RNA sequence: GGGAACGACUCGAGUAGAGUCGAAAAGAUAUGGAGACCUCACGCAUCGAUCUACAUCGAGUCGGAAACGACUCGAGUGUAGGGAGCGUGGGUCUCCUAAGUCAAAUCGUCCAGUUCGCUGGACGAACGUAAUUCAAAAGUUCGCUUUUGAAUUACGAAAAGAAACAACAACAACAAC
Reactivity to DMS in 0.01 (KOAc 150mM, MgCl2 10mM, bicine 150mM(pH8.5), 24C), signal-to-noise 9, nucleotides 027 to 126: g000a050u000a300u010g000g000a020g010a020c010c010u020c020a010c010g020c010a300u000c190g010a080u010c000u000a010c000a060u000c000g000a020g010u000c000g000g000a080a070a210c010g010a010c000u000c000g000a020g020u000g010u000a010g010g000g010a030g010c000g060u000g010g000g010u000c000u000c000c000u000a000a070g000u000c030a100a120a180u000c000g010u000c000c000a010g010u000u010c240g020c010u000g000g000a010c000g000a010a060
Reactivity to 2A3 in 0.01 (KOAc 150mM, MgCl2 10mM, bicine 150mM(pH8.5), 24C), signal-to-noise 7, nucleotides 027 to 126: g010a020u060a030u160g020g000a010g000a010c010c070u300c190a000c000g010c010a210u300c110g140a100u060c020u010a000c000a010u010c000g000a000g000u000c010g000g000a020a020a010c010g010a010c010u010c010g030a060g040u080g000u010a010g000g030g030a040g000c010g000u000g000g000g000u000c000u000c000c000u000a010a000g000u010c010a010a020a140u050c010g000u000c010c000a000g010u060u090c290g020c140u010g000g010a000c000g000a020a010